[RMDB]
RNA sequence: GGGAACGACUCGAGUAGAGUCGAAAAAGUGUUAUCCACAGAGAACCAAUGUUGCUGAGAAUUGGUGUUAACAGUAGUAUAAUGAUCACUCUGGAGCUUUUGUACUGAAUAUUUUUAGUAAGUACAACCGAGGGAGACUAUUCGUAGUCUCCCUCGGAAAAGAAACAACAACAACAAC
Reactivity to DMS in 0.01 (KOAc 150mM, MgCl2 10mM, bicine 150mM(pH8.5), 24C), signal-to-noise 1, nucleotides 027 to 126: a110g110u000g020u000u000a080u000c090c060a120c000a050g000a050g030a070a110c020c020a100a000u000g000u030u000g010c020u000g000a080g010a020a000u070u000g040g000u090g000u060u020a080a010c010a040g000u000a080g000u060a040u000a110a060u000g080a080u000c220a130c020u000c090u000g000g000a090g000c170u000u000u070u000g000u000a070c000u040g000a120a050u040a060u030u020u030u080u000a270g000u000a060a050g000u000a000c000a110a100
Reactivity to 2A3 in 0.01 (KOAc 150mM, MgCl2 10mM, bicine 150mM(pH8.5), 24C), signal-to-noise 1, nucleotides 027 to 126: a040g240u190g000u090u040a010u030c040c040a050c120a030g030a000g000a070a010c000c000a000a000u150g040u130u060g020c070u010g000a000g060a030a030u070u000g000g010u080g210u100u130a070a040c000a040g000u090a000g000u000a000u240a160a090u120g130a000u180c000a000c000u000c000u000g070g000a120g000c000u000u000u100u030g000u000a000c000u000g080a060a060u080a300u070u030u140u030u000a000g000u000a000a000g000u000a000c010a070a000

The record gives the reactivity of an RNA of 177 nucleotides to DMS and 2A3. For 2A3, 379 sequencing reads were counted. It was measured as part of the RMDB library OK1LIB. 2A3 adducts were read by reverse transcription with SuperScript II with manganese. High 2A3 reactivity points to a flexible backbone, as in loops and unpaired stretches. For DMS the reverse transcriptase was MarathonRT.